[RMDB]
RNA sequence: GGGAACGACUCGAGUAGAGUCGAAAACUGCAUCACCUGAUCACUGAUGGCUGAACGGUAUCCGGCGGUACAACUGAAUACUUGUAGCUGCCUUUUGAGCGGGUUGGCUGCAAUCCGAAACGGAGAGAAAACCUAAUUACGUUCGCGUAAUUAGGAAGGCUGAGUAUUCGUUCGCGAAUACUCAGCCAAAAGAAACAACAACAACAAC
Reactivity to 2A3 in 0.01 (KOAc 150mM, MgCl2 10mM, bicine 150mM(pH8.5), 24C), signal-to-noise 1, nucleotides 027 to 156: c000u050g020c010a010u040c010a030c000c000u010g030a020u020c010a010c060u050g000a030u030g110g020c040u020g000a050a010c000g060g000u020a010u000c010c000g020g000c010g060g040u060a060c020a110a010c060u130g110a120a000u040a120c030u030u070g000u000a010g040c010u000g000c000c000u000u030u040u120g070a050g010c050g000g040g040u090u220g060g000c000u010g020c000a010a020u070c020c010g010a070a150a140c080g040g000a070g020a040g030a020a070a020a060c000c000u000a000a000u000u000a010c010g020u030u040c090g000c000g080u000a000a000u030u000a000g010g010a000a000